Annotation:
This 207-nucleotide RNA was probed chemically with DMS and 2A3. The RNA was probed in 150 mM KOAc, 10 mM MgCl2 and 150 mM bicine (pH 8.5) at 24 C. Source: RMDB library M2RFPK, as collected in RNAgym.

RNA sequence: GGGAACGACUCGAGUAGAGUCGAAAAAUUAAAAAAUUAAGCAAAAGACAACCACCUUUCCCGCUGACAAUAGCGUUAUCCCUCUGCACUUCGGUACUAUGAGGGCACAGUAAAUCCCGCAAGGAUGAUGAUCAACAGGGGUUCGCCCCUGUUGAAAUCAGUACAAUAACUUCGGUUAUUGUACUGAAAAAGAAACAACAACAACAAC
Reactivity to DMS in 0.01 (KOAc 150mM, MgCl2 10mM, bicine 150mM(pH8.5), 24C), signal-to-noise 1, nucleotides 027 to 156: a140u000u050a010a060a070a110a030a140u000u000a040a100g010c040a080a050a070a110g010a230c070a090a060c000c030a090c050c020u010u000u000c040c010c020g000c090u000g000a100c100a070a080u000a080g040c070g030u010u000a070u010c020c000c030u000c000u010g040c080a030c030u000u000c190g010g000u000a040c030u000a090u010g010a080g000g020g010c060a040c070a060g000u000a060a080a100u010c010c000c010g060c070a070a120g030g050a050u010g000a090u010g000a200u000c020a000a020c000a040g020g010g010g010u000u010c300g030c010c000c000c000u000g010u010u000g000a000a030a040
Reactivity to 2A3 in 0.01 (KOAc 150mM, MgCl2 10mM, bicine 150mM(pH8.5), 24C), signal-to-noise 1, nucleotides 027 to 156: a000u060u040a030a000a020a020a000a090u180u190a090a010g010c000a000a060a060a080g040a130c020a070a040c030c010a020c050c020u020u030u010c000c010c010g000c080u080g000a030c060a070a080u060a100g000c010g020u080u040a120u080c020c000c000u000c000u040g000c060a040c100u060u060c100g110g040u020a040c030u020a090u170g000a010g000g000g000c000a000c000a040g050u070a000a000a150u020c030c030c010g060c030a020a010g030g010a020u070g000a000u070g010a020u070c000a000a000c000a000g000g000g030g000u000u030c080g110c000c020c000c020u000g000u000u000g010a000a000a000